RNA sequence: GGGAACGACUCGAGUAGAGUCGAAAAAGACGACCGCCAUCCACAUCAAAUUCCUGCCAGGUGUGGUCCAGGUUUAACUGCAGGUGGCGACCAAACUGGUAACGCACCUCGGGACCCAGUCGGGUUGUAAGUGGGGACUAUUCGUAGUCCCCACUUAAAAAGAAACAACAACAACAAC
Reactivity to DMS in 0.01 (KOAc 150mM, MgCl2 10mM, bicine 150mM(pH8.5), 24C), signal-to-noise 1, nucleotides 027 to 126: a050g030a080c090g000a050c040c060g010c020c030a090u000c010c010a070c000a040u000c060a070a050a180u000u000c030c010u000g010c070c130a090g000g000u000g020u000g010g000u000c080c080a060g000g000u010u000u000a060a070c080u000g000c180a060g010g010u000g010g000c090g010a120c020c050a050a030a130c230u010g000g020u020a040a090c040g010c020a020c040c010u000c040g010g030g000a040c030c000c000a140g030u010c100g000g010g020u000u010g030